RNA sequence: GGGAACGACUCGAGUAGAGUCGAAAAAUUCAGGAGAGUAGAUGAUUCGCGUUAAGUGUGUGUGAAUGGGAUGUCGUCACACAACGAAGCGAGAGCGCGGUGAAUCAUUGCAUGCGCUCCAAACGAACGUUCCUCAUCCUUUCGAGGAUGAGGAACGAAAAGAAACAACAACAACAAC
Reactivity to 2A3 in 0.01 (KOAc 150mM, MgCl2 10mM, bicine 150mM(pH8.5), 24C), signal-to-noise 1, nucleotides 027 to 126: a020u120u100c050a050g000g000a010g050a010g020u060a020g000a060u030g000a010u050u050c020g000c030g010u000u100a170a060g040u130g040u030g000u000g000u000g230a110a160u080g130g000g160a100u140g200u200c020g000u000c010a000c000a000c000a000a050c000g000a100a000g030c010g020a030g020a000g040c000g000c000g000g100u070g000a020a020u060c030a050u040u070g040c080a040u120g010c010g040c010u020c010c000a070a040a000c090g030a040a000
Reactivity to DMS in 0.01 (KOAc 150mM, MgCl2 10mM, bicine 150mM(pH8.5), 24C), signal-to-noise 1, nucleotides 027 to 126: a210u000u000c070a260g020g000a000g000a070g010u010a090g000a000u000g000a030u000u000c010g010c000g040u000u000a020a180g030u000g040u000g020u000g010u000g020a030a010u000g010g020g040a170u020g000u020c040g000u010c010a010c000a000c000a010a040c030g000a160a080g030c020g000a220g000a050g020c010g100c050g010g040u000g000a010a020u000c020a030u010u000g010c060a110u000g000c030g000c000u000c030c040a050a050a080c190g000a050a050